[RMDB]
RNA sequence: GGGAACGACUCGAGUAGAGUCGAAAAAUUACAAUGUAGCAUACAUACAAUCUUUUAUAGUUCGAGACCGAGUUCGGACAAAAAUGGAACGUGAUAUCUUGGUAGAGGUUAAUCAUCCUUUUAUUGUCAAGUUGCAUUAUGGUAAGUAUGAGCCGUAGCAUAUUUUACCAUUCGUGGUAAAAUAUGCAAAAGAAACAACAACAACAAC
Reactivity to 2A3 in 0.01 (KOAc 150mM, MgCl2 10mM, bicine 150mM(pH8.5), 24C), signal-to-noise 7, nucleotides 027 to 156: a000u180u100a030c070a050a100u110g020u050a040g060c020a040u060a130c000a010u110a040c020a100a110u050c040u030u160u070u100a160u090a120g020u010u020c020g010a020g030a110c090c060g030a060g060u050u030c020g010g010a010c020a020a110a010a020a040u070g040g000a050a020c040g020u010g020a030u030a030u140c040u040u030g060g000u050a050g000a020g070g030u050u090a060a050u080c040a040u060c010c000u050u070u060u100a110u120u070g050u050c030a030a030g000u030u040g050c030a020u050u070a030u150g020g000u050a100a040g020u020a060u070g030a010g040c020c020g040u040a010
Reactivity to DMS in 0.01 (KOAc 150mM, MgCl2 10mM, bicine 150mM(pH8.5), 24C), signal-to-noise 2, nucleotides 027 to 156: a080u030u010a120c070a090a100u000g030u000a060g010c040a100u000a090c050a300u010a090c050a110a130u010c050u000u010u000u010a130u000a120g010u000u000c020g000a120g000a220c070c060g000a120g030u000u000c040g030g020a150c050a000a040a060a060a100u000g010g000a050a040c080g030u010g000a100u000a000u010c040u000u000g020g020u010a150g020a020g020g020u010u000a090a120u000c060a100u010c020c010u000u000u000u020a100u000u020g000u000c010a050a160g020u000u000g010c000a100u010u000a060u000g020g000u000a030a120g010u000a040u000g000a240g000c010c020g010u000a200
Source: RMDB library OK3TST, as collected in RNAgym. Structure probing data (2A3 and DMS) for a 207-nucleotide construct. Reactivities are given for positions 27 through 156. The reactions ran in a buffer of 150 mM KOAc, 10 mM MgCl2 and 150 mM bicine (pH 8.5), at 24 C. 2A3 adducts were read by reverse transcription with SuperScript II with manganese. In probing experiments dimethyl sulfate is read out at A N1 and C N3, which are open when not base-paired.